[RMDB]
RNA sequence: GGGAACGACUCGAGUAGAGUCGAAAAUUCAAACGAUCAGGCUAUCUACGCGCACCUCGAAAUUUUCCUCGCGGUUGCUUCCGCCGUUCUGGAGCUCGAAAUUUCCGUGCCGUCAAUCCAGCUCCCGAUAAUUAAUACGCUUCGGCGUAUUAAUUAUAAAAGAAACAACAACAACAAC
Reactivity to DMS in 0.01 (KOAc 150mM, MgCl2 10mM, bicine 150mM(pH8.5), 24C), signal-to-noise 6, nucleotides 027 to 126: u030u020c060a070a080a120c110g000a070u020c060a080g000g000c050u030a050u020c040u010a060c090g010c080g010c050a060c040c020u000c060g020a060a080a090u010u020u010u010c020c010u010c080g010c080g000g000u010u010g010c030u010u010c020c010g000c030c020g000u010u020c060u010g000g010a050g000c040u010c090g000a060a070a120u000u020u010c030c040g020u020g010c030c020g000u000c060a060a090u010c040c030a060g010c060u000c010c000c030g010
Reactivity to 2A3 in 0.01 (KOAc 150mM, MgCl2 10mM, bicine 150mM(pH8.5), 24C), signal-to-noise 7, nucleotides 027 to 126: u090u030c020a080a050a040c050g070a090u070c040a030g050g000c010u070a040u110c020u060a090c040g040c020g000c030a050c010c020u060c040g060a060a080a090u110u120u050u030c010c010u020c020g020c030g030g020u060u090g030c030u080u020c010c010g020c010c010g020u080u020c030u080g040g010a030g010c030u010c070g080a080a060a070u070u060u010c020c010g020u040g050c010c010g040u050c020a010a050u030c010c010a010g020c030u010c000c000c000g010